The record gives the reactivity of an RNA of 177 nucleotides to DMS and 2A3. It was measured as part of the RMDB library OK2TRN. The 2A3 profile rests on 1,194 reads. For DMS the reverse transcriptase was MarathonRT. The reactions ran in a buffer of 150 mM KOAc, 10 mM MgCl2 and 150 mM bicine (pH 8.5), at 24 C. Values are in units of 0.01, from 0 to 300, in steps of 10.

RNA sequence: GGGAACGACUCGAGUAGAGUCGAAAAUGUGAAAACAAAACUUUGGGUAUUUGUUUCCCAUUCAGGAGAUCUGGGAGUGACUUCAUGUAUUUCUUUAACAGUCUUUGAUCGUCACCUUUCAAUUUAGGGAAGAGGAAUGAUUCGUCAUUCCUCUUCCAAAAGAAACAACAACAACAAC
Reactivity to DMS in 0.01 (KOAc 150mM, MgCl2 10mM, bicine 150mM(pH8.5), 24C), signal-to-noise 3, nucleotides 027 to 126: u020g010u010g000a040a020a040a030c000a010a050a050a040c050u010u020u020g020g020g030u010a130u000u000u000g010u000u000u000c000c030c010a070u010u000c140a080g010g000a110g010a040u010c090u000g000g000g000a050g000u010g000a050c030u000u000c030a050u000g000u010a060u010u000u000c040u010u000u000a120a120c160a090g000u010c040u000u010u010g000a050u010c080g020u000c050a090c040c070u000u000u000c090a030a070u010u010u010a120g010
Reactivity to 2A3 in 0.01 (KOAc 150mM, MgCl2 10mM, bicine 150mM(pH8.5), 24C), signal-to-noise 2, nucleotides 027 to 126: u040g070u020g060a050a010a000a020c000a010a070a010a020c070u110u170u120g240g110g000u100a230u100u030u040g070u000u040u010c010c010c000a020u060u090c010a000g090g080a100g010a140u060c070u020g030g030g030a060g030u020g000a030c010u060u030c030a020u060g080u100a190u110u080u030c080u040u160u050a080a040c040a080g010u020c040u010u060u070g040a030u060c010g030u020c020a030c030c050u080u140u010c030a140a200u080u120u160a100g020